[RMDB]
Record summary
Chemical mapping of a 207-nucleotide RNA with 2A3 and DMS. Conditions: 150 mM KOAc, 10 mM MgCl2 and 150 mM bicine (pH 8.5), 24 C.

RNA sequence: GGGAACGACUCGAGUAGAGUCGAAAAAACAGUACCUGAAACAGGUGAGUAGAUAUCUGAAGCAGCUUUUACUGAUUCUGCUACGGCAACAUCAUCGCCAACACUAAUUGAAUCAUCAACAUCUGGUAAUUCAACAAAUACCAUGUCACCUAAAAGGGAAUAUUCUACGGUUCGCCGUAGAAUAUUCAAAAGAAACAACAACAACAAC
Reactivity to 2A3 in 0.01 (KOAc 150mM, MgCl2 10mM, bicine 150mM(pH8.5), 24C), signal-to-noise 8, nucleotides 027 to 156: a010a000c060a030g010u040a050c010c000u050g050a120a080a030c050a050g030g000u000g010a030g010u140a050g030a070u100a040u100c080u090g040a070a000g010c020a010g010c040u060u090u090u160a110c050u070g030a070u080u020c000u020g010c020u030a040c060g020g000c030a040a030c010a160u170c020a040u110c080g010c010c010a040a020c050a040c100u120a080a080u070u090g040a030a020u040c020a020u030c040a040a070c020a120u050c050u040g030g000u050a070a070u110u070c040a040a040c030a070a160a010u060a020c010c020a020u100g060u070c010a020c050c010u110a080a130a030a020g050g010
Reactivity to DMS in 0.01 (KOAc 150mM, MgCl2 10mM, bicine 150mM(pH8.5), 24C), signal-to-noise 2, nucleotides 027 to 156: a030a050c070a090g000u010a150c000c010u010g010a120a060a070c120a090g020g020u020g010a070g050u000a080g020a070u000a090u020c040u020g000a070a090g010c010a030g030c060u010u000u000u010a020c040u000g010a090u000u000c020u020g000c030u000a050c100g000g000c030a050a060c050a080u010c100a130u000c080g030c020c030a050a100c050a120c110u010a040a150u010u000g010a040a020u000c030a030u000c020a050a190c210a100u000c170u010g060g020u010a010a030u000u000c000a020a050c030a060a050a050u000a030c020c000a080u010g020u010c030a030c020c030u010a050a050a040a100g000g000
The 2A3 profile rests on 6,295 reads. Values cover nucleotides 27 to 156.